RNA sequence: GGGAACGACUCGAGUAGAGUCGAAAAAAGCUCGCGGCGUAGCUGCUCGCAGAACGGGUCAGCCAUACUGACGUGCGCAACCACGGGGCCCUCGAAGAAGGUAUAGUCGCGCUUCUUUGUCAUGUCGGGCGUCAUAAUCAUUCGUGAUUAUGACGCCAAAAGAAACAACAACAACAAC
Reactivity to 2A3 in 0.01 (KOAc 150mM, MgCl2 10mM, bicine 150mM(pH8.5), 24C), signal-to-noise 2, nucleotides 027 to 126: a000a000g050c030u030c030g050c020g010g000c000g050u020a030g000c080u050g030c030u060c000g040c120a050g030a130a090c050g000g020g070u180c050a020g060c010c010a100u090a130c090u080g060a040c000g040u110g000c070g000c000a010a040c010c000a000c040g010g000g050g000c020c030c000u030c000g040a000a000g030a020a010g100g000u140a160u160a130g090u140c050g000c010g000c040u010u000c000u020u020u120g020u000c050a100u050g100u140c110g000
Reactivity to DMS in 0.01 (KOAc 150mM, MgCl2 10mM, bicine 150mM(pH8.5), 24C), signal-to-noise 1, nucleotides 027 to 126: a040a000g010c040u030c030g000c000g000g000c050g000u010a030g000c000u040g150c020u000c020g000c050a080g000a300a300c040g000g000g000u040c040a030g000c100c130a230u000a130c020u040g000a040c080g000u000g000c050g000c180a030a030c050c120a050c220g040g000g000g040c000c050c040u000c040g000a040a000g070a030a000g000g000u010a040u000a040g000u000c080g110c100g000c040u000u000c000u000u000u000g030u050c170a050u000g000u000c140g000